Structure probing data (2A3 and DMS) for a 177-nucleotide construct. 2A3 adducts were read by reverse transcription with SuperScript II with manganese. The RNA was probed in 150 mM KOAc, 10 mM MgCl2 and 150 mM bicine (pH 8.5) at 24 C.
RNA sequence: GGGAACGACUCGAGUAGAGUCGAAAAGAUAUCAAAACGAAGAUAAGUGGCUGCACAAACUUUUUUUAGCGAAUAUAUCGUUAUGUUAUCGGGUCUAGCACUCUAUCCACUGAUUUCAUGACCACGACAUUAUGACUACCUUCGGGUAGUCAUAAUGAAAAGAAACAACAACAACAAC
Reactivity to 2A3 in 0.01 (KOAc 150mM, MgCl2 10mM, bicine 150mM(pH8.5), 24C), signal-to-noise 3, nucleotides 027 to 126: g030a030u060a000u080c040a000a070a050a110c060g070a040a080g030a080u060a120a050g040u030g120g040c050u060g040c030a020c020a080a160a080c060u180u080u030u090u040u100u160a020g000c010g040a100a000u150a010u010a050u250c010g010u010u000a030u060g040u040u030a040u110c040g040g000g010u020c010u010a010g030c020a010c050u040c020u020a040u010c020c010a040c060u030g010a050u030u060u050c050a040u080g040a040c010c010a060c050g060a010
Reactivity to DMS in 0.01 (KOAc 150mM, MgCl2 10mM, bicine 150mM(pH8.5), 24C), signal-to-noise 4, nucleotides 027 to 126: g000a070u000a040u010c030a040a040a090a090c090g010a070a090g010a060u000a060a060g020u000g000g010c050u000g000c120a060c120a090a090a100c020u000u010u010u010u000u000u010a030g030c010g020a070a110u000a030u000a050u000c010g020u000u000a050u010g000u000u010a030u010c020g010g000g020u000c040u000a070g030c080a050c100u000c060u010a040u000c040c020a080c070u000g000a050u000u000u000c040a090u010g010a140c020c040a110c140g000a140
Description
For DMS the reverse transcriptase was MarathonRT. The 2A3 profile rests on 3,602 reads. Values cover nucleotides 27 to 126. DMS (dimethyl sulfate) methylates the pairing face of unpaired adenines and cytosines. For DMS, 3,263 sequencing reads were counted.